[RMDB]
RNA sequence: GGGAACGACUCGAGUAGAGUCGAAAAGAUAUGGACAUCAAGAACGAUAAGUCGAUCGGAAACGAUUCGACUUUUGACGUUCGAAGUGUCCUAAGUCAAAAGAGAUUUACGUUCGCGUAAAUCUCAAUCUCCUAGAUAGGUUCGCCUAUCUAGGAGAAAAAGAAACAACAACAACAAC
Reactivity to DMS in 0.01 (KOAc 150mM, MgCl2 10mM, bicine 150mM(pH8.5), 24C), signal-to-noise 6, nucleotides 027 to 126: g010a030u000a300u000g000g000a020c010a000u010c020a060a300g000a000a010c000g020a150u000a020a020g020u000c000g000a030u000c000g010g000a080a080a170c000g000a010u000u010c010g010a020c000u000u000u000u000g010a130c080g020u000u000c000g000a120a170g000u000g010u000c000c000u010a020a090g010u010c040a080a070a100a070g010a000g000a010u000u000u000a000c000g010u010u020c250g020c000g020u000a000a010a010u000c000u000c000a040a050
Reactivity to 2A3 in 0.01 (KOAc 150mM, MgCl2 10mM, bicine 150mM(pH8.5), 24C), signal-to-noise 4, nucleotides 027 to 126: g000a000u060a040u100g010g000a010c000a000u110c040a110a070g010a010a000c030g110a180u030a140a010g010u010c010g010a000u000c000g000g040a040a010a010c010g000a010u240u290c020g000a000c020u000u010u010u030g010a010c000g000u000u000c000g000a020a020g010u000g000u010c000c000u010a050a010g020u010c020a000a020a140a080g010a010g000a010u000u000u020a010c010g030u030u090c290g000c010g150u000a000a000a020u000c010u000c000a000a000